[RMDB]
RNA sequence: GGGAACGACUCGAGUAGAGUCGAAAAGACAUGCGCUGCCUAUUGAUCGUGGGGUCCUCGCAGACCCGGUGGUAUUCGGUGGAUUCGCAGGACCGGGUGUUCACCCCGCGCCGCUAUCCCGAGGCGGCCUAAAUCCUGCUUUCGAGCAGGAUUUAGGAAAAGAAACAACAACAACAAC
Reactivity to DMS in 0.01 (KOAc 150mM, MgCl2 10mM, bicine 150mM(pH8.5), 24C), signal-to-noise 4, nucleotides 027 to 126: g000a080c150a050u010g020c100g020c020u000g010c020c010u000a130u010u010g010a070u010c070g020u000g010g010g010g000u000c030c030u000c200g020c120a180g000a070c030c000c010g010g020u000g010g010u010a070u010u000c050g000g000u010g010g000a230u010u000c080g020c090a110g000g000a060c030c010g020g010g010u000g000u010u010c120a070c030c000c010c030g000c160g010c040c040g020c030u000a080u000c000c030c020g010a120g010g020c000g000g020
Reactivity to 2A3 in 0.01 (KOAc 150mM, MgCl2 10mM, bicine 150mM(pH8.5), 24C), signal-to-noise 3, nucleotides 027 to 126: g010a030c050a050u130g020c050g010c080u060g020c000c010u090a120u090u190g100a100u110c070g000u030g020g030g000g000u030c010c040u060c110g000c060a040g030a080c000c000c000g010g010u070g050g110u150a210u070u140c030g030g010u090g120g080a220u140u050c050g030c070a060g010g010a000c030c020g000g000g010u060g010u100u130c030a060c010c010c010c010g020c030g010c000c000g000c000u070a070u110c010c000c010g000a060g000g000c030g000g000